Structure probing data (2A3 and DMS) for a 177-nucleotide construct.
For 2A3 the reverse transcriptase was SuperScript II with manganese.
Source: RMDB library OK1LIB, as collected in RNAgym.
For DMS the reverse transcriptase was MarathonRT.
Reactivities are given for positions 27 through 126.
For DMS, 2,684 sequencing reads were counted.
The reactions ran in a buffer of 150 mM KOAc, 10 mM MgCl2 and 150 mM bicine (pH 8.5), at 24 C.
RNA sequence: GGGAACGACUCGAGUAGAGUCGAAAAUCACAUUGACUUCUUAGCAAUCAAUAUGAGUGAAGAACGUACUGUUGAAGUACCAGUUCAAUUAGUUGGUGAAGCAGUAGGCGCUAAAGAAGGCGGCGUACCUACGCUACCGGUUCGCCGGUAGCGUAGGAAAAGAAACAACAACAACAAC
Reactivity to 2A3 in 0.01 (KOAc 150mM, MgCl2 10mM, bicine 150mM(pH8.5), 24C), signal-to-noise 2, nucleotides 027 to 126: u100c010a000c030a090u050u160g040a040c020u020u000c000u000u060a010g000c000a040a070u070c000a010a140u090a190u300g100a000g100u140g080a060a050g010a120a000c020g130u000a000c000u010g110u300u240g050a020a000g000u070a000c000c000a030g020u170u140c010a080a100u100u050a130g030u020u050g000g010u010g040a060a020g020c070a010g000u050a020g020g020c120g000c010u040a080a270a030g050a010a010g010g010c000g070g000c030g000u020a020
Reactivity to DMS in 0.01 (KOAc 150mM, MgCl2 10mM, bicine 150mM(pH8.5), 24C), signal-to-noise 2, nucleotides 027 to 126: u030c020a050c070a000u010u010g010a020c010u000u020c010u030u000a100g000c050a240a090u030c020a000a000u000a030u040g000a050g010u010g000a080a060g020a070a220c300g020u000a000c000u040g000u020u050g000a170a030g000u000a000c010c050a080g000u000u000c050a040a050u020u020a010g000u010u010g040g010u000g030a100a100g020c010a120g000u030a050g000g010c160g000c020u000a000a120a090g010a020a010g000g010c100g030g010c100g000u040a120